[RMDB]
RNA sequence: GGGAACGACUCGAGUAGAGUCGAAAAAGAGCCGGAUACGUCCGGCUCAACGGGGGAUACGUGUGGUGCCGUCCGCUCCCCCUAUGGCAUAACAAAUGCUCCACACACUAGGCUACGGCCUAGUGAAAAAAGGUGUAUGUGUUCGCACAUACACCAAGGUAAGCACAAAGUUCGCUUUGUGCUUACCAAAAGAAACAACAACAACAAC
Reactivity to 2A3 in 0.01 (KOAc 150mM, MgCl2 10mM, bicine 150mM(pH8.5), 24C), signal-to-noise 1, nucleotides 027 to 156: a000g000a010g000c000c000g000g010a040u060a020c170g150u010c010c000g010g000c000u000c000a000a010c010g000g000g000g000g000a020u020a140c040g040u060g030u010g010g100u030g090c070c010g060u070c010c050g030c010u010c000c000c000c010c000u000a110u110g100g000c050a050u100a190a050c100a120a050a000u020g010c000u020c020c000a040c000a040c000a000c050u000a000g020g010c010u010a000c240g050g010c000c000u010a000g000u000g010a060a000a000a000a000a000g000g000u000g000u000a000u000g010u010g000u020u020c110g060c120a000c000a000u000a000c000a000c020c000a000a000
Structure probing data (2A3) for a 207-nucleotide construct. Conditions: 150 mM KOAc, 10 mM MgCl2 and 150 mM bicine (pH 8.5), 24 C. Values cover nucleotides 27 to 156.